[RMDB]
RNA sequence: GGGAACGACUCGAGUAGAGUCGAAAAAGGCCCUGUUUCGACAGGGCCUAAAAAACCUUUGUGACCGUUACGCAUCGAUCUGUGGAGAGCCCAUUGGGCUCCCACAGGGAGCGUAUCGGUCACUCUGGUAAAAAACGUUCGUAUUCGUACGAACGAACACAUAUAUAUCUUUCGAGAUAUAUAUGUGAAAAGAAACAACAACAACAAC
Reactivity to 2A3 in 0.01 (KOAc 150mM, MgCl2 10mM, bicine 150mM(pH8.5), 24C), signal-to-noise 3, nucleotides 027 to 156: a020g020g000c010c000c010u000g000u000u160u080c130g070a010c000a000g020g020g010c000c000u010a030a000a000a000a000a000c000c000u020u000u030g000u000g000a000c000c000g000u000u000a000c010g020c040a280u300c090g040a050u020c000u000g010u010g020g020a190g010a030g270c020c040c060a230u170u300g020g000g000c000u000c000c000c000a000c010a000g000g000g000a010g000c000g000u000a000u000c000g010g000u010c000a000c000u010c000u000g000g000u030a100a070a000a000a010a000c020g000u000u000c000g000u010a000u030u140c300g020u040a000c000g000a000a000c000g010a060a000
Reactivity to DMS in 0.01 (KOAc 150mM, MgCl2 10mM, bicine 150mM(pH8.5), 24C), signal-to-noise 1, nucleotides 027 to 156: a030g040g030c000c010c000u010g030u000u000u000c240g020a120c030a000g020g040g060c000c010u000a000a000a040a030a010a010c000c000u000u010u010g010u000g000a020c000c000g020u000u000a010c000g050c020a300u000c140g000a020u010c000u010g030u000g000g000a230g020a000g020c000c000c000a300u000u030g070g030g010c000u000c010c000c010a010c030a000g000g000g000a020g040c010g020u000a000u000c010g010g020u010c010a000c000u000c030u000g020g010u020a010a020a040a100a050a080c020g020u000u000c010g030u000a060u000u010c250g020u000a010c030g000a020a020c000g010a080a110